Structure probing data (DMS and 2A3) for a 177-nucleotide construct. The data come from the RNA Mapping Database (RMDB), library M2PK50.
RNA sequence: GGGAACGACUCGAGUAGAGUCGAAAACAGCAAUUAUUCGUAAUUGCUGAAUGGGGGACCCAGCGCGGAAGGAGCGCGCAGGACUCCUUCGCCGCCUUUUAAUAAGCAGGUACUUCGGUACCUGCAAUGAUACGAAUUCUUUCGAGAAUUCGUAUCAAAAAGAAACAACAACAACAAC
Reactivity to DMS in 0.01 (KOAc 150mM, MgCl2 10mM, bicine 150mM(pH8.5), 24C), signal-to-noise 3, nucleotides 027 to 126: c010a010g000c000a000a000u000u010a020u000u010c180g030u010a010a010u000u000g000c000u000g000a050a090u000g000g000g010g010g000a250c060c010c010a120g020c050g000c070g000g010a080a050g010g000a050g020c060g000c140g020c140a080g000g000a200c050u010c000c000u000u000c030g010c090c060g010c040c050u010u010u020u010a060a180u010a100a130g000c000a010g010g010u000a000c000u000u000c120g010g000u010a000c000c000u000g010c000a000a010
Reactivity to 2A3 in 0.01 (KOAc 150mM, MgCl2 10mM, bicine 150mM(pH8.5), 24C), signal-to-noise 3, nucleotides 027 to 126: c000a000g010c000a000a000u020u030a030u060u150c180g070u060a030a010u000u020g000c000u010g000a030a080u130g020g030g000g000g010a060c010c010c020a040g000c010g000c010g080g030a110a060g050g050a050g050c040g020c000g010c050a000g000g100a070c010u030c000c000u010u020c070g090c070c030g040c000c020u220u300u090u080a190a160u240a190a040g000c000a000g010g000u000a010c000u040u090c210g070g010u010a000c010c010u000g000c000a010a000
Record summary:
Conditions: 150 mM KOAc, 10 mM MgCl2 and 150 mM bicine (pH 8.5), 24 C.